[RMDB]
RNA sequence: GGGAACGACUCGAGUAGAGUCGAAAACAAUAUUACCUGUAACUAGCCAAGCUACGAUUGCAAUGGCCAAUGCAACUGGAACAAGCCAAGUGGCCCAUUUGUCUGCAAUCCUUUGAGUCGGAGCCUGCAUACGCACGACUUUCGAGUCGUGCGUAUGAAAAGAAACAACAACAACAAC
Reactivity to 2A3 in 0.01 (KOAc 150mM, MgCl2 10mM, bicine 150mM(pH8.5), 24C), signal-to-noise 6, nucleotides 027 to 126: c050a020a080u160a100u240u190a110c030c030u090g060u150a070a050c070u040a030g050c020c030a050a000g030c020u050a050c100g050a060u010u060g020c030a050a140u160g020g000c020c010a030a040u060g040c020a030a010c040u030g040g040a090a110c090a170a050g080c020c010a130a060g080u110g060g000c010c000c010a060u000u040u070g080u030c030u070g000c000a010a060u020c030c020u040u100u300g020a010g010u020c010g040g060a090g070c010c000u000g000
Reactivity to DMS in 0.01 (KOAc 150mM, MgCl2 10mM, bicine 150mM(pH8.5), 24C), signal-to-noise 3, nucleotides 027 to 126: c090a090a080u040a120u000u010a150c100c010u000g000u000a030a120c080u030a060g000c030c030a110a120g010c020u000a100c100g020a030u010u000g020c020a080a170u020g000g030c010c010a070a040u020g000c080a060a080c080u020g010g010a120a150c100a200a150g000c060c060a040a100g010u010g000g000c010c070c110a040u040u030u020g000u020c060u030g000c090a010a060u000c000c060u020u030u030g000a030g040u000c020g000g000a180g000c010c080u000g030
Structure probing data (2A3 and DMS) for a 177-nucleotide construct. The 2A3 profile rests on 3,816 reads. For DMS, 3,057 sequencing reads were counted. Reactivities are given for positions 27 through 126. The reactions ran in a buffer of 150 mM KOAc, 10 mM MgCl2 and 150 mM bicine (pH 8.5), at 24 C. 2A3 is a SHAPE reagent: it acylates the 2'-hydroxyl of flexible nucleotides of all four kinds. Source: RMDB library OK1LIB, as collected in RNAgym. For DMS the reverse transcriptase was MarathonRT.